The data come from the RNA Mapping Database (RMDB), library OK2TRN. This 177-nucleotide RNA was probed chemically with DMS. The RNA was probed in 150 mM KOAc, 10 mM MgCl2 and 150 mM bicine (pH 8.5) at 24 C. Reactivities are given for positions 27 through 126.

RNA sequence: GGGAACGACUCGAGUAGAGUCGAAAAUUAUAUUCCAAGGUCGUACGAAUUUAACUAAUCGUCUAAAAGCGGAACGUUGUGAGAACUGUGACAAAACAACCCCACUGCAAAUUCAUCACAUUGGGACACAAUCUAGACACUUCGGUGUCUAGAUUGUAAAAGAAACAACAACAACAAC
Reactivity to DMS in 0.01 (KOAc 150mM, MgCl2 10mM, bicine 150mM(pH8.5), 24C), signal-to-noise 1, nucleotides 027 to 126: u010u040a080u000a190u000u000c010c030a120a120g010g060u030c140g020u000a050c100g000a040a040u000u000u020a100a080c080u000a160a040u010c020g030u000c030u000a000a040a110a150g000c030g000g000a070a030c100g010u000u020g010u000g000a140g020a080a110c070u000g000u000g000a070c160a070a010a120a100c140a040a040c030c030c020c060a060c060u000g050c070a010a040a120u010u010c060a000u020c040a030c050a080u000u000g020g000g000a020c120